[RMDB]
RNA sequence: GGGAACGACUCGAGUAGAGUCGAAAAGAGUUUCGUGCCUAACUCCUUACCGGCUAACACCUAACGCCAGGAUGCCGCUUUGCCUGGCCGUGCUUUGCUGCGCCCGCACUGCCCGGGCCGAGACCACUCUGUCAUAUUAGUUCGCUAAUAUGACAGAAAAAGAAACAACAACAACAAC
Reactivity to DMS in 0.01 (KOAc 150mM, MgCl2 10mM, bicine 150mM(pH8.5), 24C), signal-to-noise 9, nucleotides 027 to 126: g010a090g010u000u000u000c050g020u000g010c020c030u000a090a100c070u000c020c030u000u000a130c100c050g000g010c040u000a080a100c120a070c050c070u000a090a090c170g010c010c010a040g000g000a070u000g020c040c040g010c060u000u000u010g010c010c010u000g000g010c020c100g010u000g000c050u000u000u010g020c040u000g010c090g010c020c020c060g020c080a090c060u000g000c050c050c020g000g010g020c010c030g000a060g000a130c030c050a090c190
Reactivity to 2A3 in 0.01 (KOAc 150mM, MgCl2 10mM, bicine 150mM(pH8.5), 24C), signal-to-noise 7, nucleotides 027 to 126: g080a020g010u050u080u090c060g040u130g030c000c010u050a080a060c020u050c010c010u050u080a080c020c020g000g010c020u050a070a020c030a060c060c030u040a130a020c050g010c020c010a020g020g010a030u070g100c020c020g060c080u080u070u110g030c010c010u010g020g030c010c010g010u030g000c020u100u090u090g020c030u030g020c020g030c020c020c000g010c020a070c100u080g020c020c030c010g010g010g000c000c010g020a020g030a030c010c020a040c040
This 177-nucleotide RNA was probed chemically with DMS and 2A3. For 2A3 the reverse transcriptase was SuperScript II with manganese. The reactions ran in a buffer of 150 mM KOAc, 10 mM MgCl2 and 150 mM bicine (pH 8.5), at 24 C. High DMS reactivity at an A or C suggests that its Watson-Crick edge is free. It was measured as part of the RMDB library OK2TRN.